The record gives the reactivity of an RNA of 177 nucleotides to 2A3. It was measured as part of the RMDB library OK1LIB. 2A3 adducts were read by reverse transcription with SuperScript II with manganese. The 2A3 profile rests on 531 reads.
RNA sequence: GGGAACGACUCGAGUAGAGUCGAAAAUCACAAAGCGGAUUUAGCUCGGUUGGGAGAGGUCCAGACCGACGAUCUGGUCUUCCUGUGUCCGAGACACAGAAUUCGCACCAUAAACAACGGGAGAUUCCCCAGGGACGUGGUUCGCCACGUCCCUGGGAAAAGAAACAACAACAACAAC
Reactivity to 2A3 in 0.01 (KOAc 150mM, MgCl2 10mM, bicine 150mM(pH8.5), 24C), signal-to-noise 1, nucleotides 027 to 126: u210c010a000c080a100a050a000g000c000g000g000a000u080u000u000a000g000c000u000c000g000g030u030u110g070g040g000a060g070a020g060g050u010c000c000a020g000a000c000c070g300a070c020g000a080u000c000u000g000g000u000c000u000u000c000c000u090g000u000g090u240c000c050g030a000g300a210c040a000c050a030g050a000a000u000u000c000g000c000a090c000c130a050u300a110a090a050c060a060a000c050g020g010g000a020g030a070u250u160c000